[RMDB]
RNA sequence: GGGAACGACUCGAGUAGAGUCGAAAAGGGUGAAGUGCAACAGGAAAGUACUCUCUCUGGACCAGUUCCAUUGAAAGACCUGGUAAGGUGCACCCGAGUUUUAAAAUGGACCGUGAUUCAUCCACACAUUACGCGUCUAUUUCGAUAGACGCGUAAUAAAAGAAACAACAACAACAAC
Reactivity to DMS in 0.01 (KOAc 150mM, MgCl2 10mM, bicine 150mM(pH8.5), 24C), signal-to-noise 3, nucleotides 027 to 126: g000g010g000u010g000a110a120g000u010g010c040a060a130c100a100g000g010a180a110a130g020u010a080c060u000c050u000c010u000c010u000g010g000a090c030c120a140g020u000u010c000c000a050u000u020g000a100a080a040g000a070c010c000u000g010g010u020a070a100g000g010u010g010c040a030c110c090c020g000a080g010u000u000u020u020a040a090a120a080u010g000g010a030c090c070g000u020g020a130u000u000c030a080u000c000c030a110c190a070c190
Reactivity to 2A3 in 0.01 (KOAc 150mM, MgCl2 10mM, bicine 150mM(pH8.5), 24C), signal-to-noise 1, nucleotides 027 to 126: g030g000g010u050g040a010a050g010u020g110c040a070a030c040a110g030g060a140a140a050g080u130a090c000u000c000u030c000u000c020u050g030g060a040c000c000a020g050u120u000c010c000a020u030u040g080a140a100a060g000a080c010c040u010g000g030u070a110a030g120g000u010g040c020a020c030c000c010g000a040g010u030u100u010u080a120a220a050a090u080g060g040a000c040c080g040u030g020a090u050u030c010a040u060c030c000a090c000a010c010
Notes:
This 177-nucleotide RNA was probed chemically with DMS and 2A3. Conditions: 150 mM KOAc, 10 mM MgCl2 and 150 mM bicine (pH 8.5), 24 C. High DMS reactivity at an A or C suggests that its Watson-Crick edge is free. The data come from the RNA Mapping Database (RMDB), library OK2TST.